Background
This 177-nucleotide RNA was probed chemically with DMS. Reactivities are given for positions 27 through 126. The DMS profile rests on 3,256 reads.
RNA sequence: GGGAACGACUCGAGUAGAGUCGAAAACUUACAGCUGUGAAUCUGGUUACUUGCUUGUUGGAGAAAAGAUCAUUAACUGUUUGUCUUCGGGAAAAUGGAGUGCUGUCCCCCCCACAUGUGAAGGUACCCUAACACCACUAUUCGUAGUGGUGUUAGGAAAAGAAACAACAACAACAAC
Reactivity to DMS in 0.01 (KOAc 150mM, MgCl2 10mM, bicine 150mM(pH8.5), 24C), signal-to-noise 3, nucleotides 027 to 126: c050u000u000a040c080a050g000c040u000g010u000g030a090a080u000c030u000g010g010u000u000a070c080u000u010g000c110u010u020g020u000u000g020g010a080g000a050a120a130a030g000a050u010c030a040u000u000a050a090c040u000g000u000u000u020g010u010c030u000u000c100g020g000g010a020a040a080a080u000g010g010a090g020u000g000c050u000g000u010c010c000c000c000c010c000c000a070c110a060u000g000u010g000a100a080g020g010u000a080c190